An RNA of 177 nucleotides, treated with 2A3 and DMS and read out base by base. The data come from the RNA Mapping Database (RMDB), library OK1LIB. For 2A3, 3,480 sequencing reads were counted.
RNA sequence: GGGAACGACUCGAGUAGAGUCGAAAAACGUGCAUCUUCCAUUCCUCUUUUUCGCUUUUUUUUUUUUGGUACAGCACAAGUAGGGCCUCGGUAGGAGGACAGAUCGUAGCCAGGCGGUGUGCGGUCACACCGCGGAGGCAUUCGUGCCUCCGCGGUGAAAAGAAACAACAACAACAAC
Reactivity to 2A3 in 0.01 (KOAc 150mM, MgCl2 10mM, bicine 150mM(pH8.5), 24C), signal-to-noise 1, nucleotides 027 to 126: a000c030g040u040g010c020a050u020c040u060u020c010c010a050u020u040c020c000u040c010u040u030u010u050u070c050g030c080u050u020u000u020u020u020u010u010u010u000u000u090g160g010u160a090c010a040g030c020a070c010a090a090g050u060a130g140g100g000c030c000u010c030g120g150u150a080g050g120a020g000g030a000c020a020g040a020u050c010g010u040a010g030c010c000a030g120g000c030g050g030u080g030u010g030c030g050g000u050c010a000
Reactivity to DMS in 0.01 (KOAc 150mM, MgCl2 10mM, bicine 150mM(pH8.5), 24C), signal-to-noise 1, nucleotides 027 to 126: a040c090g060u020g010c000a020u000c030u000u000c010c000a150u000u000c010c040u000c040u000u000u000u000u000c030g020c020u070u020u000u000u000u000u000u000u160u070u000u030g020g000u030a040c080a110g000c020a050c050a050a060g020u000a070g000g000g000c020c050u000c000g010g000u010a180g020g000a010g000g030a040c060a030g020a040u000c020g010u000a140g010c010c040a120g000g000c070g030g000u000g010u020g000c080g000g040u030c050a210